[RMDB]
RNA sequence: GGGAACGACUCGAGUAGAGUCGAAAAUGGGCCAUGAGAAAGUUAACUUAGGGAGAAUUAAAACAUACAGUCACGGAAUUUCUGGGCCAGACAUGGCUAAAUAACAAGAUAUAGAAGUAGACAUAUAAGUUAGAUGGUAGUUCGCUACCAUCUAACUAAAAGAAACAACAACAACAAC
Reactivity to 2A3 in 0.01 (KOAc 150mM, MgCl2 10mM, bicine 150mM(pH8.5), 24C), signal-to-noise 3, nucleotides 027 to 126: u080g040g090g000c010c020a060u040g030a070g070a080a180a010g080u140u170a030a060c050u030u050a040g020g050g070a040g020a100a100u130u150a100a130a080a030c040a020u280a000c040a030g010u010c020a020c090g010g000a010a010u090u030u010c020u100g020g000g000c010c000a000g010a000c080a030u050g000g000c020u070a170a000a000u150a010a040c070a020a090g110a030u200a070u130a090g030a120a000g080u120a050g040a020c050a040u280a010u080a100
Reactivity to DMS in 0.01 (KOAc 150mM, MgCl2 10mM, bicine 150mM(pH8.5), 24C), signal-to-noise 3, nucleotides 027 to 126: u010g010g010g000c050c000a080u000g000a130g000a050a050a090g010u040u020a030a160c060u020u020a120g000g000g000a100g020a070a120u020u020a030a070a040a070c160a040u030a100c110a130g010u020c050a050c050g000g000a050a070u010u010u000c030u000g000g000g010c000c030a060g010a110c290a070u000g000g000c050u010a050a070a070u010a050a050c110a030a010g010a060u030a080u000a060g010a090a090g000u000a030g010a050c070a060u000a050u010a010